[RMDB]
Chemical mapping of a 207-nucleotide RNA with 2A3 and DMS.
RNA sequence: GGGAACGACUCGAGUAGAGUCGAAAAGGGUCACUCGCAUCAAGUAACCAACCAUCAGGGCAUAGCCCGUCGAGGAGUACACCAUGUAUCAGCGUACCACCACUGCAUCCCGUCGUCGUGACCGGAUGAUGAACACCAACUGGUUGCACGUGAGCCAACUGUGGCUAUACUUCGGUAUAGCCACAGUAAAAGAAACAACAACAACAAC
Reactivity to 2A3 in 0.01 (KOAc 150mM, MgCl2 10mM, bicine 150mM(pH8.5), 24C), signal-to-noise 2, nucleotides 027 to 156: g040g010g000u020c030a010c020u080c080g000c040a050u060c070a070a090g060u110a120a110c040c040a010a060c030c000a100u110c030a100g030g000g000c080a180u130a140g010c000c000c000g020u030c030g000a030g060g040a050g040u030a020c020a070c020c040a050u110g030u080a110u090c020a030g010c030g060u040a030c010c100a040c000c010a060c060u070g000c010a040u000c020c020c020g000u010c010g030u020c020g100u150g020a030c020c040g000g000a010u050g000a020u080g080a070a020c090a030c070c020a050a060c020u010g020g010u010u030g000c020a010c080g000u020g020a020g080c000c020a030
Reactivity to DMS in 0.01 (KOAc 150mM, MgCl2 10mM, bicine 150mM(pH8.5), 24C), signal-to-noise 1, nucleotides 027 to 156: g010g000g030u000c040a060c030u000c040g060c090a060u010c080a000a110g020u000a040a100c040c030a150a190c030c030a100u000c050a200g040g010g020c020a140u000a140g000c050c020c000g000u020c090g070a150g000g000a180g030u000a040c000a050c000c000a120u030g010u000a090u000c040a100g020c000g040u000a010c080c000a010c000c010a060c040u000g030c010a120u000c030c000c020g000u000c040g000u010c130g010u000g000a050c010c030g000g000a030u000g000a080u000g000a130a080c040a090c020c030a080a090c050u000g000g000u000u000g010c040a010c070g080u010g000a130g010c020c010a060

2A3 adducts were read by reverse transcription with SuperScript II with manganese.
Values cover nucleotides 27 to 156.
As a SHAPE reagent, 2A3 marks flexible, mostly unpaired nucleotides at the ribose 2'-OH.
The reactions ran in a buffer of 150 mM KOAc, 10 mM MgCl2 and 150 mM bicine (pH 8.5), at 24 C.